[RMDB]
RNA sequence: GGGAACGACUCGAGUAGAGUCGAAAAGAUAUGGACUCUGGCGACGAUCUAUAUCAGUUUCGGAAACGAAACUGAGUAUAGGGAGCCAACGUGAGUCCUAAGUCAAACUCCCUCUUCGGAGGGAGAACAUCAUGUACCACUUCGGUGGUACAUGAUGAAAAGAAACAACAACAACAAC
Reactivity to DMS in 0.01 (KOAc 150mM, MgCl2 10mM, bicine 150mM(pH8.5), 24C), signal-to-noise 4, nucleotides 027 to 126: g000a050u000a300u000g000g000a000c000u000c010u000g010g020c060g030a030c210g010a050u010c000u000a010u000a030u000c000a000g020u000u000u000c000g000g000a130a070a210c010g000a010a000a010c000u000g000a020g000u000a000u000a020g010g010g000a130g010c010c000a040a080c160g000u010g000a020g020u000c000c000u000a010a100g010u000c030a090a120a180c010u000c000c000c000u000c000u000u000c160g010g000a030g000g010g000a010g000a020a140
Reactivity to 2A3 in 0.01 (KOAc 150mM, MgCl2 10mM, bicine 150mM(pH8.5), 24C), signal-to-noise 2, nucleotides 027 to 126: g010a020u090a040u140g000g000a000c010u010c090u060g010g000c010g080a300c010g010a080u010c000u010a000u000a000u020c000a000g000u000u020u000c010g020g030a090a060a060c000g000a000a010a010c010u010g000a020g020u020a000u000a020g000g000g000a000g000c010c000a050a010c140g300u210g000a000g000u010c000c000u010a100a010g060u010c030a040a040a190c000u000c000c010c000u000c000u020u040c240g150g000a010g000g000g000a010g010a010a030